[RMDB]
Record summary: Chemical mapping of a 177-nucleotide RNA with DMS. The RNA was probed in 150 mM KOAc, 10 mM MgCl2 and 150 mM bicine (pH 8.5) at 24 C. Reactivities are given for positions 27 through 126.
RNA sequence: GGGAACGACUCGAGUAGAGUCGAAAAGCCGAUUUGCAGGUGCUGGUGAAACCGUUCGAUGACCGGAUCAUGCCUUCGCUGGGGGCAGCGGUUUUCGAGGAAGGCCCGUUGCGCAUCCGCCCGGCGACACUGGGCGAGUAUUCGUACUCGCCCAGUGAAAAGAAACAACAACAACAAC
Reactivity to DMS in 0.01 (KOAc 150mM, MgCl2 10mM, bicine 150mM(pH8.5), 24C), signal-to-noise 2, nucleotides 027 to 126: g010c020c010g000a170u010u010u010g030c020a030g020g030u000g000c030u010g030g000u010g010a080a090a110c030c030g000u010u000c010g020a030u010g000a030c020c000g010g010a180u020c190a120u000g040c010c000u000u000c050g020c100u010g000g020g000g010g030c020a030g040c010g010g000u000u000u000u000c040g010a060g000g000a120a100g020g000c080c020c030g030u020u000g010c090g010c020a060u000c060c090g020c030c220c020g020g000c010g020a160